This 177-nucleotide RNA was probed chemically with 2A3 and DMS. For 2A3, 2,082 sequencing reads were counted.

[RMDB]
RNA sequence: GGGAACGACUCGAGUAGAGUCGAAAAUCACUGUUGACCAGGAGUACAGUGGCAUGAUCAUGUCUCCCUGCAGCCUCAGCCACCGAGGCUCAAACCAUCCUCCUGCCUCAGCCUCCCCAGUAGCAGGCGCUACUGGGGCUUUCGAGCCCCAGUAGCGAAAAGAAACAACAACAACAAC
Reactivity to 2A3 in 0.01 (KOAc 150mM, MgCl2 10mM, bicine 150mM(pH8.5), 24C), signal-to-noise 2, nucleotides 027 to 126: u080c010a010c000u050g060u080u060g060a100c030c070a050g040g050a030g000u090a050c020a010g070u000g020g040c040a110u090g040a170u200c060a030u170g060u020c060u040c030c020c010u020g000c060a050g020c000c010u020c020a020g040c020c040a040c030c050g020a030g010g000c010u000c010a050a050a020c030c040a010u050c000c000u000c000c010u020g060c020c000u010c000a020g040c020c010u030c010c020c000c000a020g000u040a010g030c040a020g070g110
Reactivity to DMS in 0.01 (KOAc 150mM, MgCl2 10mM, bicine 150mM(pH8.5), 24C), signal-to-noise 5, nucleotides 027 to 126: u010c070a090c050u000g010u010u000g000a110c140c030a080g000g010a110g020u010a050c070a050g020u010g000g010c070a050u010g000a090u010c120a070u000g010u000c050u000c020c010c020u000g000c120a050g010c020c010u000c020a150g000c030c070a030c090c070g000a060g010g000c010u010c060a050a070a080c120c060a110u000c070c020u000c030c020u000g000c030c020u000c040a060g010c030c040u000c000c000c010c030a120g010u010a060g000c080a070g000g020
It was measured as part of the RMDB library OK2TRN. For 2A3 the reverse transcriptase was SuperScript II with manganese. The reactions ran in a buffer of 150 mM KOAc, 10 mM MgCl2 and 150 mM bicine (pH 8.5), at 24 C.